[RMDB]
RNA sequence: GGGAACGACUCGAGUAGAGUCGAAAAGAUAUGGACGCACCCUUUUGACGCUCGAGGGUUCGGAAACGAACCGUAGAGCGAUAAGGUUGCGUCCUAAGUCAAACUGACAUAGUUCGCUAUGUCAGAAGGAAAAGUAGUGGUUCGCCACUACUUUUCCAAAAGAAACAACAACAACAAC
Reactivity to DMS in 0.01 (KOAc 150mM, MgCl2 10mM, bicine 150mM(pH8.5), 24C), signal-to-noise 2, nucleotides 027 to 126: g030a040u010a300u000g000g000a010c000g000c010a000c070c000c000u000u000u000u000g010a160c110g020c000u000c020g000a230g000g020g040u020u000c000g000g000a100a070a210c010g000a000a000c000c000g000u010a300g020a000g000c000g020a070u000a000a000g000g020u000u000g000c010g000u020c000c000u000a000a060g020u000c030a100a120a230c020u000g010a010c000a020u030a010g010u000u020c220g000c030u000a010u000g010u000c000a020g020a060a080
Chemical mapping of a 177-nucleotide RNA with DMS. The RNA was probed in 150 mM KOAc, 10 mM MgCl2 and 150 mM bicine (pH 8.5) at 24 C.